[RMDB]
RNA sequence: GGGAACGACUCGAGUAGAGUCGAAAAUACAUACAGGACAAUUUGUUGUUUAUUGUCAGCUUUGAGUUUAGGAUGUAUCAUAGGCACCAUACUUAUUUUUGGAGAUGUUUCCCUCAACUGUUAAUGCCAUUUACUAGCUCUUCGGAGCUAGUAAAUGAAAAGAAACAACAACAACAAC
Reactivity to DMS in 0.01 (KOAc 150mM, MgCl2 10mM, bicine 150mM(pH8.5), 24C), signal-to-noise 5, nucleotides 027 to 126: u010a060c040a030u010a070c080a170g000g000a030c040a040a050u000u000u020g000u010u000g000u010u010u020a110u020u000g010u000c020a100g000c050u000u010u000g010a140g000u000u020u010a090g010g000a050u000g010u000a030u010c100a070u020a120g010g010c050a050c040c030a030u000a070c090u020u020a080u000u010u010u010u010g010g010a090g010a070u010g010u010u010u000c000c000c010u010c120a050a080c110u000g020u010u000a050a090u010g010c190
Reactivity to 2A3 in 0.01 (KOAc 150mM, MgCl2 10mM, bicine 150mM(pH8.5), 24C), signal-to-noise 7, nucleotides 027 to 126: u120a010c040a020u120a060c020a050g100g070a000c020a050a040u010u020u120g000u010u020g010u010u060u030a050u020u030g040u020c020a030g040c040u090u050u080g090a070g020u080u090u110a110g040g030a110u050g050u080a040u060c060a110u100a120g040g060c030a030c060c000a030u080a150c030u100u150a150u240u180u040u070u070g070g010a100g010a030u050g030u030u050u030c000c020c000u030c030a050a150c050u040g050u180u140a070a030u100g050c000
An RNA of 177 nucleotides, treated with DMS and 2A3 and read out base by base. Reactivities are given for positions 27 through 126. The RNA was probed in 150 mM KOAc, 10 mM MgCl2 and 150 mM bicine (pH 8.5) at 24 C. Source: RMDB libraries RFM100 and RFMREP, as collected in RNAgym.